[RMDB]
The record gives the reactivity of an RNA of 177 nucleotides to DMS and 2A3.

RNA sequence: GGGAACGACUCGAGUAGAGUCGAAAAGAUAUGGACCGGCACUUUUGACGGCUAUGAUUCGGAAACGAAUCUAAGGCCGAUAAGUGCGUCCUAAGUCAAAAGGGGUUUAGCUUCGGCUAAACCCCAACUAGCGAUAAUUGUUCGCAAUUAUCGCUAGAAAAGAAACAACAACAACAAC
Reactivity to DMS in 0.01 (KOAc 150mM, MgCl2 10mM, bicine 150mM(pH8.5), 24C), signal-to-noise 3, nucleotides 027 to 126: g000a040u000a280u000g000g000a020c100c300g060g020c000a000c000u000u000u000u000g010a190c110g020g000c000u000a300u010g000a010u000u010c000g000g000a070a060a090c000g020a020a010u010c000u000a040a160g000g030c000c010g000a070u000a000a000g010u000g000c010g000u010c000c000u000a030a130g000u000c030a080a060a100a100g010g000g000g010u000u010u000a000g010c000u000u010c200g030g000c000u000a000a010a020c000c010c000c000a000a020
Reactivity to 2A3 in 0.01 (KOAc 150mM, MgCl2 10mM, bicine 150mM(pH8.5), 24C), signal-to-noise 3, nucleotides 027 to 126: g000a000u040a040u070g000g000a010c070c160g300g040c020a000c010u060u130u130u300g300a200c070g000g020c000u000a010u230g000a010u000u020c010g010g000a020a020a020c000g000a030a000u000c000u020a140a170g090g000c010c040g010a010u010a000a010g000u000g010c010g010u000c010c010u020a080a010g030u030c010a000a040a100a220g030g030g000g000u000u000u000a000g020c000u030u080c300g000g000c000u000a010a000a000c020c000c000c000a000a000
Notes:
The reactions ran in a buffer of 150 mM KOAc, 10 mM MgCl2 and 150 mM bicine (pH 8.5), at 24 C. 2A3 adducts were read by reverse transcription with SuperScript II with manganese.